[RMDB]
RNA sequence: GGGAACGACUCGAGUAGAGUCGAAAAGAUCAAACACCCUUGUAAGUUAGGAGGAAUUGCAAUAUCUGGACUUAUUGUAAAGGAAAUUGUCUCAAAAGGGAUUUAUCUACACAUGAGAGUAAUAUCAAACAAGGGCGUAGUUCGCUACGCCCUUGUUAAAAGAAACAACAACAACAAC
Reactivity to DMS in 0.01 (KOAc 150mM, MgCl2 10mM, bicine 150mM(pH8.5), 24C), signal-to-noise 1, nucleotides 027 to 126: g010a040u010c100a040a080a150c080a040c040c000c000u030u000g010u010a100a080g000u000u000a100g000g000a090g000g010a220a050u010u000g000c070a080a050u000a020u000c070u000g010g010a140c080u000u000a030u010u000g010u020a040a040a100g000g010a020a090a120u000u000g030u010c010u000c010a050a090a040a160g030g020g020a180u000u010u000a040u000c020u000a110c130a030c090a170u030g000a060g000a080g020u000a010a080u000a050u000c090a150
The data come from the RNA Mapping Database (RMDB), library OK2TRN. The record gives the reactivity of an RNA of 177 nucleotides to DMS. The reactions ran in a buffer of 150 mM KOAc, 10 mM MgCl2 and 150 mM bicine (pH 8.5), at 24 C.